[RMDB]
RNA sequence: GGGAACGACUCGAGUAGAGUCGAAAAGAUAUGGACUGCCCACCGAGUCGGACAUCGGAAACGAUGUCAACGACGAUGAGGUGGCAGUCCUAAGUCAAACAAUUGGGAAGUUCGCUUCCCAAUUGAAUCCUUUGAUAGUCUUCGGACUAUCAAAGGAAAAAGAAACAACAACAACAAC
Reactivity to DMS in 0.01 (KOAc 150mM, MgCl2 10mM, bicine 150mM(pH8.5), 24C), signal-to-noise 2, nucleotides 027 to 126: g020a020u000a020u010g010g000a030c000u010g000c270c060c090a020c010c000g000a020g020u010c010g010g000a030c000a000u000c020g030g010a010a020a010c000g010a010u000g000u000c000a040a080c020g010a020c000g030a150u020g010a100g000g010u000g000g010c010a000g010u000c000c000u000a000a050g010u000c000a140a170a260c010a010a020u010u010g000g000g000a030a010g010u000u000c280g010c000u000u000c000c010c000a010a000u000u000g000a100a160
Reactivity to 2A3 in 0.01 (KOAc 150mM, MgCl2 10mM, bicine 150mM(pH8.5), 24C), signal-to-noise 1, nucleotides 027 to 126: g000a000u010a010u030g000g010a020c020u000g050c120c110c000a010c000c030g020a030g000u010c020g040g000a000c010a000u000c010g030g000a000a000a010c010g010a000u020g000u020c040a070a110c000g040a000c020g170a300u300g030a010g000g010u020g000g000c000a000g000u010c000c000u000a000a000g010u020c000a030a060a060c020a030a000u020u000g000g000g020a040a000g060u100u210c300g180c130u000u000c010c000c020a010a000u000u000g000a000a040